[RMDB]
RNA sequence: GGGAACGACUCGAGUAGAGUCGAAAAACGGCUGGCUACGGCCAGCCGAAUCGGGCCAAAGGCAGUCGCCAGACGACACAGGCGAUCGUUCGCCCAAGCGCUGCACACGACUAUACGUAGUCGUGAAUUGAUCACGCAACCUUCGGGUUGCGUGAAACUAUAUUGAACUGUUCGCAGUUCAAUAUAGAAAAGAAACAACAACAACAAC
Reactivity to 2A3 in 0.01 (KOAc 150mM, MgCl2 10mM, bicine 150mM(pH8.5), 24C), signal-to-noise 2, nucleotides 027 to 156: a020c010g000g000c000u000g000g010c040u070a060c220g090g000c010c110a000g000c040c040g010a010a040u070c000g030g060g000c000c030a120a080a080g060g000c050a020g060u130c020g000c020c000a050g070a080c090g060a010c040a010c040a170g060g000c020g010a020u080c040g090u070u060c050g050c000c000c010a020a020g020c010g010c090u100g000c030a020c000a000c040g020a000c000u020a000u100a150c240g140u050a020g010u030c000g000u000g030a000a000u050u120g040a020u030c000a000c000g000c000a000a000c010c000u010u050c060g080g000g000u000u020g000c000g000u000g000a000a000a000
Reactivity to DMS in 0.01 (KOAc 150mM, MgCl2 10mM, bicine 150mM(pH8.5), 24C), signal-to-noise 1, nucleotides 027 to 156: a140c050g040g000c010u000g080g030c000u000a090c200g070g000c000c000a020g040c060c000g030a010a000u010c050g000g000g000c050c080a030a070a120g020g050c020a020g070u000c080g040c000c000a190g030a070c090g020a190c120a170c060a150g020g000c050g030a060u000c050g030u000u010c050g020c010c020c050a060a170g000c080g010c030u020g000c020a300c000a050c000g020a010c030u000a090u000a100c300g000u000a000g020u010c000g030u000g010a020a020u000u000g020a130u020c010a000c000g010c010a000a000c020c000u010u000c300g080g050g000u000u000g010c000g050u010g000a000a020a100
An RNA of 207 nucleotides, treated with 2A3 and DMS and read out base by base. Values cover nucleotides 27 to 156.